[RMDB]
RNA sequence: GGGAACGACUCGAGUAGAGUCGAAAACGACCUUAAACAGUUCUGGUGGUGCUCUGAAUGGAGUGCUCUACUGAGAUUAUAAAAUAGAAGGUAAGCUAUUAUCUCUUACAACAUGGCAGGGCUUGUUAAAAGCCUUUCAGUUUCGACUGAAAGGCAAGCUACCAUAUCGUUUCGACGAUAUGGUAGCAAAAGAAACAACAACAACAAC
Reactivity to 2A3 in 0.01 (KOAc 150mM, MgCl2 10mM, bicine 150mM(pH8.5), 24C), signal-to-noise 2, nucleotides 027 to 156: c080g050a040c010c000u120u130a100a160a010c010a020g010u030u020c020u070g050g030u030g040g000u050g010c000u000c030u090g160a110a100u260g030g000a010g010u050g010c030u030c030u050a110c040u050g020a000g010a060u100u080a050u200a100a120a070a030u060a040g040a030a050g080g040u110a060a010g010c020u010a030u160u030a030u130c030u000c000u040u060a040c020a140a000c010a060u030g030g000c060a000g000g000g000c020u030u060g020u030u010a080a110a040a000g010c000c010u000u000u010c010a020g000u020u000u090c100g050a010c010u010g000a000a000a000g010g000c000a000a010